[RMDB]
RNA sequence: GGGAACGACUCGAGUAGAGUCGAAAAUCUCGAGCAGUCGCCUUUUCUUCCUUUCUUCUACCCACUGUUCGAGGAUCUCCUCCCUCUCCUUCGAGGACGGGUUCGCGACGGGUUGGCUCAUCCUGAGAAACAUUGCCCUUCGGGGCAAUGAAAAGAAACAACAACAACAAC
Reactivity to DMS in 0.01 (KOAc 150mM, MgCl2 10mM, bicine 150mM(pH8.5), 24C), signal-to-noise 3, nucleotides 027 to 129: u050c040u000c010g030a000g050c090a060g030u040c170g050c050c040u010u040u040u020c050u030u020c040c030u020u050u020c050u010u060c050u070a150c030c020c040a100c070u040g000u050u010c030g000a130g000g000a000u010c050u000c050c000u050c090c030c010u040c040u080c020c090u000u000c080g020a150g050g010a020c100g020g040g060u010u030c030g020c050g010a120c100g000g040g030u030u040g000g040c040u020c070a060u040c030c030u070g050a080g030a050a070a070
Reactivity to 2A3 in 0.01 (KOAc 150mM, MgCl2 10mM, bicine 150mM(pH8.5), 24C), signal-to-noise 5, nucleotides 027 to 129: u000c000u000c010g010a000g000c010a000g020u080c020g090c000c000u100u140u080u080c060u050u130c000c000u080u120u070c020u080u010c050u160a170c010c000c000a030c000u000g020u040u030c030g000a030g010g000a020u030c040u030c030c030u020c000c010c000u040c030u010c020c010u080u060c050g040a000g000g050a050c070g020g000g010u010u050c020g010c010g020a040c020g010g000g000u050u070g030g000c020u040c020a040u070c000c000u110g020a060g050a070a020a010